[RMDB]
RNA sequence: GGGAACGACUCGAGUAGAGUCGAAAAACGCUUCACAAUGUGCGGCAAAGAAACAUUGUUUAUGCAAAGGCACUUCGCAAUGUGUGCUCAAACAUUGCUUAUUCAAACACGCUUCCCAAUGUGCGACAAAACUUCACGGUCUUCGGACCGUGAAGAACGUAGUCACGAUGUUCGCAUCGUGACUACGAAAAGAAACAACAACAACAAC
Reactivity to 2A3 in 0.01 (KOAc 150mM, MgCl2 10mM, bicine 150mM(pH8.5), 24C), signal-to-noise 5, nucleotides 027 to 156: a000c030g000c000u010u000c000a000c000a010a000u010g020u000g010c000g060g070c140a100a090a100g100a010a060a000c000a000u010u020g110u040u130u100a100u120g050c040a050a090a070g170g000c010a000c010u040u030c030g000c020a000a010u000g000u000g060u020g030c070u110c240a060a070a000c000a000u010u010g010c000u050u070a150u100u110c060a040a040a030c030a000c060g030c090u030u030c010c000c000a020a050u090g010u010g030c030g020a030c090a010a090a040a040c000u000u000c000a000c000g000g000u010c000u040u060c100g090g000a000c000c000g000u000g000a000a000g000a000a000
Reactivity to DMS in 0.01 (KOAc 150mM, MgCl2 10mM, bicine 150mM(pH8.5), 24C), signal-to-noise 1, nucleotides 027 to 156: a010c040g010c000u000u000c090a060c000a050a010u000g050u000g090c060g010g000c060a040a110a060g060a040a010a010c000a030u000u010g070u010u000u030a100u000g080c000a020a100a010g000g060c010a030c100u000u000c090g020c040a140a150u000g010u000g030u000g000c000u000c070a040a130a080c010a050u000u000g000c060u020u000a090u000u020c030a090a280a030c020a040c000g010c040u000u000c010c010c010a040a030u000g040u000g000c090g090a090c040a030a040a090a120c000u000u030c000a050c000g050g030u000c010u000u010c300g050g080a000c020c010g070u000g020a020a000g010a100a100